Conditions: 150 mM KOAc, 10 mM MgCl2 and 150 mM bicine (pH 8.5), 24 C. This 177-nucleotide RNA was probed chemically with 2A3 and DMS. 2A3 adducts were read by reverse transcription with SuperScript II with manganese. The data come from the RNA Mapping Database (RMDB), library OK2TRN. For DMS, 1,897 sequencing reads were counted. DMS adducts were read by reverse transcription with MarathonRT. Reactivities are rounded to 0.1 and cut off at 0 and 3.
RNA sequence: GGGAACGACUCGAGUAGAGUCGAAAAGACGGCGAGACGCUGACGGUCGAGGCGGCGAACGCUUCGGUCGAGUACACGGUGUCGGCCGAGUACGACGACGAGCGCGUAGAUAGCGAACCGUUCGAUGCCGUGGAUGAUGGUUCGCCAUCAUCCACGGAAAAGAAACAACAACAACAAC
Reactivity to 2A3 in 0.01 (KOAc 150mM, MgCl2 10mM, bicine 150mM(pH8.5), 24C), signal-to-noise 2, nucleotides 027 to 126: g040a000c020g010g020c030g030a140g010a060c030g000c040u030g020a000c020g000g000u030c000g010a010g010g010c000g010g050c130g090a300a060c020g010c000u030u000c010g010g020u020c000g030a000g000u100a050c090a020c080g030g000u000g040u030c000g000g000c000c000g020a010g020u040a030c070g000a010c010g020a000c010g030a030g050c000g000c010g000u010a070g100a240u180a040g060c020g050a070a040c020c010g020u050u030c030g020a020u080g100
Reactivity to DMS in 0.01 (KOAc 150mM, MgCl2 10mM, bicine 150mM(pH8.5), 24C), signal-to-noise 2, nucleotides 027 to 126: g000a180c010g000g000c010g000a110g050a070c050g000c050u010g010a130c000g020g000u010c040g000a020g000g000c010g010g030c180g000a100a180c010g020c000u010u000c010g070g000u000c000g010a210g040u000a120c140a100c050g000g020u000g020u020c050g010g000c010c000g000a090g020u000a100c050g100a110c070g010a060c030g000a150g020c020g000c060g020u000a080g000a130u010a050g030c010g000a080a050c080c020g010u000u000c040g000a140u000g010